This 177-nucleotide RNA was probed chemically with 2A3 and DMS. The RNA was probed in 150 mM KOAc, 10 mM MgCl2 and 150 mM bicine (pH 8.5) at 24 C. For 2A3, 1,611 sequencing reads were counted. Values cover nucleotides 27 to 126.
RNA sequence: GGGAACGACUCGAGUAGAGUCGAAAAGAUAUGGACAUGAACUACAUGCCAAACUCCUAUGAAGUCGGAAACGAUGGAGGAGCUAGGCAUGCAUGUCCUAAGUCAAACUUGUGCUUCGGCACAAGAACUGUGGGAAAACGUUCGCGUUUUCCCACAGAAAAGAAACAACAACAACAAC
Reactivity to 2A3 in 0.01 (KOAc 150mM, MgCl2 10mM, bicine 150mM(pH8.5), 24C), signal-to-noise 1, nucleotides 027 to 126: g020a000u080a010u140g010g020a000c000a020u000g000a030a040c100u240a050c260a010u000g010c020c010a010a080a080c040u040c030c000u240a300u300g060a070a000g010u000c000g000g080a080a080a080c000g000a010u020g020g000a010g000g000a000g000c000u050a020g000g030c020a000u010g000c000a000u000g020u000c020c000u020a080a000g050u090c000a010a130a090c040u010u020g000u020g000c000u020u080c290g130g030c020a000c000a000a000g020a120a040
Reactivity to DMS in 0.01 (KOAc 150mM, MgCl2 10mM, bicine 150mM(pH8.5), 24C), signal-to-noise 1, nucleotides 027 to 126: g010a010u000a300u000g000g060a040c010a000u020g010a110a020c060u040a220c000a000u000g000c000c000a070a170a160c000u000c000c010u000a220u020g000a170a160g020u000c000g010g030a080a060a150c040g020a010u000g000g000a020g000g000a000g040c000u010a180g000g010c030a000u000g010c000a000u000g000u000c000c000u000a000a030g030u040c030a130a140a110c000u000u000g000u000g020c040u000u020c240g020g030c000a000c000a000a000g000a130a110